Structure probing data (2A3) for a 207-nucleotide construct. The RNA was probed in 150 mM KOAc, 10 mM MgCl2 and 150 mM bicine (pH 8.5) at 24 C. Values cover nucleotides 27 to 156.

RNA sequence: GGGAACGACUCGAGUAGAGUCGAAAAGGGGUCAAGCGCACUUUGAGGUAAGGCUUUUGACGAGCUGAAGCCUCCACGGCUCGAUAAGCCUUACUCCCCACCAAAGUCGCUUGACGGAGGCACCCAAAAGAAUUUUAAAGUUCGCUUUAAAAUUCAACCUAAAAAUCGAGUUCGCUCGAUUUUUAGGAAAAGAAACAACAACAACAAC
Reactivity to 2A3 in 0.01 (KOAc 150mM, MgCl2 10mM, bicine 150mM(pH8.5), 24C), signal-to-noise 1, nucleotides 027 to 156: g000g000g000g010u020c000a000a000g000c000g040c020a010c030u010u010u010g000a030g010g000u030a000a020g020g000c060u090u190u180u260g170a140c010g000a010g000c000u020g000a110a000g030c000c000u000c000c000a010c000g000g020c000u000c010g040a110u050a220a060g000c000c000u000u000a000c000u010c040c000c000c020a060c010c010a000a010a000g000u000c000g000c000u000u000g000a000c050g000g000a000g000g000c000a030c000c010c030a000a050a050a110g000a000a000u020u010u000u020a030a030a020g000u030u110c250g160c050u000u000u000a010a000a010a000u010u040c000a030a050